Overview:
An RNA of 177 nucleotides, treated with 2A3 and read out base by base. The RNA was probed in 150 mM KOAc, 10 mM MgCl2 and 150 mM bicine (pH 8.5) at 24 C. For 2A3 the reverse transcriptase was SuperScript II with manganese.

RNA sequence: GGGAACGACUCGAGUAGAGUCGAAAAGAUAUACAUUGGAAGAGGAGGUGGUUGGUGAGCCAUGCAUCUAAAUGUAUUUUCCAAAUUGUAACACAGAUUAAUAGAGCCCAAGGACAGCAGUGGAAUCACCCUACUGAGCGUUCGCGCUCAGUAGGGUAAAAGAAACAACAACAACAAC
Reactivity to 2A3 in 0.01 (KOAc 150mM, MgCl2 10mM, bicine 150mM(pH8.5), 24C), signal-to-noise 1, nucleotides 027 to 126: g000a000u070a000u040a040c000a130u050u170g000g000a150a140g030a050g150g070a130g170g000u000g000g140u210u170g000g300u120g020a050g010c000c000a000u050g040c000a000u000c170u240a250a300a060u000g030u150a150u000u070u070u000c000c000a030a040a050u300u230g000u020a050a000c070a000c040a100g050a100u160u040a150a090u030a110g000a000g000c000c000c000a000a160g000g000a090c000a030g000c000a000g000u050g000g110a010a010u120c090